Chemical mapping of a 207-nucleotide RNA with 2A3 and DMS. Conditions: 150 mM KOAc, 10 mM MgCl2 and 150 mM bicine (pH 8.5), 24 C. Reactivities are given for positions 27 through 156. For DMS, 4,358 sequencing reads were counted. For DMS the reverse transcriptase was MarathonRT. High 2A3 reactivity points to a flexible backbone, as in loops and unpaired stretches.
RNA sequence: GGGAACGACUCGAGUAGAGUCGAAAAACCUUUGUGAAGGAGCAAGGAUAGUGAGUUGCGACACAACCCAUUGGGUUGUGAGAACGCAACCCUAUCUGAUGACCUCCUUCACUCUGGUAAAGAACUGAAUAUCACGUUCGCGUGAUAUUCAGUUCAACUAUACAAAAGCGUUCGCGCUUUUGUAUAGAAAAGAAACAACAACAACAAC
Reactivity to 2A3 in 0.01 (KOAc 150mM, MgCl2 10mM, bicine 150mM(pH8.5), 24C), signal-to-noise 6, nucleotides 027 to 156: a000c000c000u010u000u010g020u000g000a000a010g010g000a010g030c050a070a120g030g000a010u010a010g110u120g100a230g060u000u010g010c020g120a050c020a000c000a000a000c000c020c110a300u200u300g010g000g000u010u010g000u020g010a050g030a100a020c000g000c000a000a000c000c000c000u000a000u000c000u010g000a030u090g010a010c010c000u000c000c000u010u000c000a000c000u000c000u000g000g010u070a060a230a050g000a000a000c000u000g000a000a000u000a000u000c000a000c020g020u060u060c260g040c000g110u000g000a000u000a000u000u000c000a000g000u000u000c000a000a000
Reactivity to DMS in 0.01 (KOAc 150mM, MgCl2 10mM, bicine 150mM(pH8.5), 24C), signal-to-noise 2, nucleotides 027 to 156: a020c010c000u000u010u010g000u010g010a050a040g000g000a030g030c020a110a230g020g000a030u000a040g000u020g010a130g010u000u000g000c030g030a300c050a140c000a030a000c010c000c010a300u000u000g010g050g040u000u000g000u000g000a070g010a130a140c010g030c030a010a000c000c020c000u000a020u000c010u000g030a050u010g000a120c300c010u010c000c000u020u010c010a000c020u000c010u000g010g030u000a020a110a040g000a010a010c000u000g000a050a010u000a000u000c000a000c000g020u000u000c300g020c000g030u000g000a000u000a000u000u010c000a000g020u000u000c020a050a130